[RMDB]
RNA sequence: GGGAACGACUCGAGUAGAGUCGAAAACCAACAAUGGACAUGCAAAUGUCUUGAAGACCGAAUUAGAUGUGGAUAAGAUUGUGGCGGUUGUAAAUGAGAAUUGCGCCGAUUGUGUGGGACCCACACAUAUAGUCCCUGCGUUCGCGCAGGGACUAUAAAAAGAAACAACAACAACAAC
Reactivity to DMS in 0.01 (KOAc 150mM, MgCl2 10mM, bicine 150mM(pH8.5), 24C), signal-to-noise 1, nucleotides 027 to 126: c030c000a200a130c140a120a060u030g010g020a020c020a000u010g000c220a040a100a040u000g000u000c000u010u000g030a180a160g010a080c010c030g000a080a030u010u020a120g030a040u000g030u000g000g010a080u000a100a050g010a080u000u000g000u000g000g010c060g000g000u010u000g030u020a030a030a100u060g000a060g000a050a090u000u000g000c050g000c080c030g000a040u010u010g000u010g010u000g010g000g000a180c210c020c010a020c080a030c200a050